[RMDB]
RNA sequence: GGGAACGACUCGAGUAGAGUCGAAAACAUCAGGAUGAUUUACCAUGCAUAAGUAUUCAAUUUUUCACUUAUGAAUAUUGCCGUGAAAACGAAUACUCCCUUCCGGCUGCGGCAAAUGGGUAAUGAAUCGUAUUAUUACUUUCGAGUAAUAAUACGAAAAAGAAACAACAACAACAAC
Reactivity to DMS in 0.01 (KOAc 150mM, MgCl2 10mM, bicine 150mM(pH8.5), 24C), signal-to-noise 8, nucleotides 027 to 126: c110a090u010c130a110g020g000a120u010g010a130u000u000u000a040c020c020a100u000g010c030a030u000a030a020g010u000a070u010u020c180a090a120u010u010u010u000u010c120a030c010u000u000a040u000g000a090a120u010a130u000u000g010c070c080g010u000g000a040a060a120a120c190g000a040a040u000a130c100u000c010c020c020u000u000c050c030g010g010c140u000g010c020g000g010c030a010a030a060u010g010g010g000u000a020a020u000g010a100a100
Reactivity to 2A3 in 0.01 (KOAc 150mM, MgCl2 10mM, bicine 150mM(pH8.5), 24C), signal-to-noise 8, nucleotides 027 to 126: c030a070u130c060a020g170g010a110u070g020a020u080u030u050a030c020c010a020u070g020c010a030u070a060a020g010u050a060u080u150c100a170a210u080u080u050u150u180c040a010c010u050u040a020u090g030a070a040u150a070u120u070g020c000c010g010u030g060a030a050a030a020c020g020a030a010u070a160c030u060c010c010c030u030u010c010c010g070g020c080u070g020c020g000g000c010a020a050a090u120g070g010g010u030a020a020u060g070a030a060